An RNA of 177 nucleotides, treated with 2A3 and read out base by base.
The RNA was probed in 150 mM KOAc, 10 mM MgCl2 and 150 mM bicine (pH 8.5) at 24 C.
2A3 adducts were read by reverse transcription with SuperScript II with manganese.
It was measured as part of the RMDB library OK1LIB.
RNA sequence: GGGAACGACUCGAGUAGAGUCGAAAAGAAUUGGUAUGUAAGCUACGUCUUCCGGUAGCUGCGUCACACUUUAAGAGUGUGCAUACUGAGCCGAAGCUCAGCUUCGGUCCCCCAAGGGAAGGCCAAAGCUCCUGGUGAGUUUCGACUCACCAGGAGCAAAAGAAACAACAACAACAAC
Reactivity to 2A3 in 0.01 (KOAc 150mM, MgCl2 10mM, bicine 150mM(pH8.5), 24C), signal-to-noise 3, nucleotides 027 to 126: g070a030a080u030u010g000g000u020a000u000g000u000a000a000g000c000u000a000c000g040u020c020u000u000c000c000g000g000u000a000g000c010u000g010c000g000u000c000a000c000a020c020u040u090u300a300a150g140a010g280u000g000u000g000c010a000u000a000c010u020g000a000g000c000c000g000a000a000g010c030u080c300a020g000c000u010u000c000g000g000u000c000c000c010c000c000a000a030g040g000g000a000a000g010g000c020c040a040a040a060